Chemical mapping of a 177-nucleotide RNA with 2A3 and DMS. The DMS profile rests on 3,441 reads.

[RMDB]
RNA sequence: GGGAACGACUCGAGUAGAGUCGAAAAGAUAUGGAAGGAAAAGUCCUCGAUAAGAUGUCAUCGGAAACGAUGAUACAUCUUUUGACGAGGUCGCUCCUUCCUAAGUCAAAACACACCUUCGGGUGUGCCUACCUUACGUCUUCGGACGUAAGGUAGGAAAAGAAACAACAACAACAAC
Reactivity to 2A3 in 0.01 (KOAc 150mM, MgCl2 10mM, bicine 150mM(pH8.5), 24C), signal-to-noise 3, nucleotides 027 to 126: g020a000u080a040u140g000g020a010a020g040g010a030a060a070a200g030u050c010c000u010c000g040a050u010a150a000g000a000u000g000u010c000a000u000c000g040g000a080a080a010c010g000a000u020g020a010u070a070c000a010u000c000u020u100u030u130g170a070c050g000a000g020g000u010c020g000c050u010c010c000u010u010c000c000u010a070a020g020u000c020a060a030a150a070c010a000c000a000c010c000u050u070c300g160g000g000u010g000u000g000
Reactivity to DMS in 0.01 (KOAc 150mM, MgCl2 10mM, bicine 150mM(pH8.5), 24C), signal-to-noise 4, nucleotides 027 to 126: g010a030u010a300u010g000g020a020a010g000g000a010a120a220a160g000u000c010c000u000c000g010a200u010a030a000g010a030u000g000u000c000a000u000c000g000g000a110a100a260c010g000a000u000g000a170u000a050c020a010u000c000u000u000u010u010g010a190c170g010a020g020g010u000c030g020c240u000c000c000u000u000c010c000u000a010a060g020u000c050a090a090a100a260c010a010c000a010c000c000u000u020c230g020g010g020u000g010u010g000

Values cover nucleotides 27 to 126.